[RMDB]
The record gives the reactivity of an RNA of 177 nucleotides to DMS and 2A3. For DMS the reverse transcriptase was MarathonRT. Reactivities are given for positions 27 through 126. The reactions ran in a buffer of 150 mM KOAc, 10 mM MgCl2 and 150 mM bicine (pH 8.5), at 24 C. It was measured as part of the RMDB library OK2TST. Reactivities are rounded to 0.1 and cut off at 0 and 3.
RNA sequence: GGGAACGACUCGAGUAGAGUCGAAAAGGGGAAGGCAUGGCCCAGAGCCACCUGUGGCUUCCAUGGGCAGGUCUGGCCAAGGUAGGGUAGGCAAGAUUGAGCAUGCUCAGGAUUGGAUAGUGUGGACGAGCUAUUACCAAUUCGUUGGUAAUAGCUCAAAAGAAACAACAACAACAAC
Reactivity to DMS in 0.01 (KOAc 150mM, MgCl2 10mM, bicine 150mM(pH8.5), 24C), signal-to-noise 6, nucleotides 027 to 126: g010g010g010g010a140a060g000g010c060a080u000g010g010c040c010c020a040g000a060g010c000c010a120c070c140u000g030u010g000g010c090u000u020c090c120a080u000g010g020g020c020a090g010g010u000c040u000g010g010c030c020a050a060g000g010u010a070g000g000g010u000a080g000g000c050a050a050g000a170u000u000g010a070g010c050a080u000g020c020u000c040a060g000g000a140u000u000g000g000a080u010a060g010u000g010u000g000g000a130c260
Reactivity to 2A3 in 0.01 (KOAc 150mM, MgCl2 10mM, bicine 150mM(pH8.5), 24C), signal-to-noise 4, nucleotides 027 to 126: g040g010g000g020a060a020g060g000c060a050u070g070g020c020c020c020a020g010a020g080c010c010a020c030c060u120g020u030g060g020c050u190u030c080c010a060u060g010g000g000c060a010g020g000u030c010u020g000g030c020c010a030a010g070g020u100a020g020g050g000u040a030g030g020c040a040a020g030a060u050u110g010a030g060c060a060u090g010c010u030c050a010g010g040a070u050u110g030g010a030u050a120g090u070g020u050g090g030a040c050